Chemical mapping of a 177-nucleotide RNA with DMS.

RNA sequence: GGGAACGACUCGAGUAGAGUCGAAAAUCCUUCCUCUCCCUGUCGGUGAAGUCUCCCGCACGAGUCCUCUUCCUAGGUCCGGAGUCGAUCUCCAUCUGAUCCGUCCGGGCCCUCUUCGUCGGGGGAGCCUAGAACAUCUCUUCGGAGAUGUUCUAGGAAAAGAAACAACAACAACAAC
Reactivity to DMS in 0.01 (KOAc 150mM, MgCl2 10mM, bicine 150mM(pH8.5), 24C), signal-to-noise 1, nucleotides 027 to 126: u000c030c030u000u010c030c010u010c010u000c030c010c010u000g000u000c040g030g010u000g000a080a080g010u010c060u000c020c000c050g010c260a160c010g020a030g000u000c030c040u000c030u000u000c010c020u000a100g020g020u000c000c000g000g000a020g010u020c160g000a000u010c000u010c180c170a060u000c170u000g000a010u000c020c150g000u000c010c000g000g000g000c020c000c050u010c020u020u000c040g010u000c060g000g000g020g020g000a020g010
The DMS profile rests on 1,059 reads. It was measured as part of the RMDB library 15KREP.